RNA sequence: GGGAACGACUCGAGUAGAGUCGAAAAGGGGUCCUCUGUGAAAGACGGGCUAACCCAUUACCAUUGUCAGCUACUCGAGCUGAAGCCUCCACGGCUCGAAUCUAGCUUGGAUUUAUGGUAAUGGGUUAGCCCGGGGAGCAGAGGACGGAGGCACCCAGUGUAAAUCUAUGUUCGCAUAGAUUUACACAAAAGAAACAACAACAACAAC
Reactivity to 2A3 in 0.01 (KOAc 150mM, MgCl2 10mM, bicine 150mM(pH8.5), 24C), signal-to-noise 4, nucleotides 027 to 156: g050g000g020g040u000c020c020u010c020u000g050u030g100a250a100a060g190a060c000g010g010g000c000u000a010a000c010c000c000a030u030u000a000c000c010a000u010u030g030u050c060a010g000c010u000a000c000u010c020g010a010g010c000u020g050a130a000g080c010c030u040c020c020a050c020g010g000c000u010c000g010a010a040u090c050u040a000g040c030u060u150g180g010a060u200u300u110a020u050g000g010u010a010a040u020g000g000g000u000u000a000g000c000c000c010g010g000g000g010a010g000c000a000g000a000g000g000a000c000g000g010a000g000g030c030a030c030c010c020a010
Reactivity to DMS in 0.01 (KOAc 150mM, MgCl2 10mM, bicine 150mM(pH8.5), 24C), signal-to-noise 1, nucleotides 027 to 156: g040g000g030g050u000c000c000u000c020u000g020u000g000a200a120a150g020a130c030g020g020g020c020u000a010a020c000c000c010a020u000u000a030c010c000a020u000u000g010u000c040a070g000c000u000a030c010u000c000g010a040g000c000u010g020a030a090g020c050c020u000c010c040a300c060g010g030c010u000c020g010a010a040u010c040u000a050g020c000u000u000g040g010a070u000u000u000a010u010g010g010u000a010a010u020g000g010g000u000u000a000g000c040c000c000g000g000g010g020a300g020c010a030g010a010g020g010a010c010g000g000a050g050g030c040a250c000c000c000a260